[RMDB]
This 177-nucleotide RNA was probed chemically with 2A3 and DMS.
For DMS the reverse transcriptase was MarathonRT.
Conditions: 150 mM KOAc, 10 mM MgCl2 and 150 mM bicine (pH 8.5), 24 C.
For 2A3, 4,525 sequencing reads were counted.

RNA sequence: GGGAACGACUCGAGUAGAGUCGAAAAGCCUCCUUAGCGAAUAGUCGUCCGGUUAACGGCGUGCUUGUCAGUAAGACGACAAGAUAGCUUGGGAGGUUUUCAAAAGUAUGAGUGUUCGCACUCAUACGAGGACUUGAUAGUUCGCUAUCAAGUCCUCAAAAGAAACAACAACAACAAC
Reactivity to 2A3 in 0.01 (KOAc 150mM, MgCl2 10mM, bicine 150mM(pH8.5), 24C), signal-to-noise 2, nucleotides 027 to 126: g010c010c000u010c000c000u010u010a010g010c000g010a020a020u000a020g020u030c010g040u030c060c150g260g100u150u200a050a010c000g000g000c020g000u010g000c010u010u000g000u000c010a020g020u060a120a010g090a060c060g000a000c010a000a000g000a010u010a010g000c000u020u020g010g000g000a000g000g020u000u000u000u000c000a000a010a010a020g000u010a000u000g010a010g010u000g020u040u080c160g060c050a010c000u010c000a000u010a000c010
Reactivity to DMS in 0.01 (KOAc 150mM, MgCl2 10mM, bicine 150mM(pH8.5), 24C), signal-to-noise 3, nucleotides 027 to 126: g010c000c000u000c010c000u000u000a010g010c000g000a170a030u010a290g000u000c000g010u000c040c120g010g000u010u010a170a060c000g000g010c000g020u000g000c000u000u000g000u000c000a080g010u030a170a210g000a230c180g010a000c000a030a000g010a020u010a050g000c010u000u000g000g010g000a010g010g000u000u010u000u000c040a050a090a090a220g010u000a000u000g010a020g020u000g000u000u010c250g010c000a010c010u000c000a000u000a000c010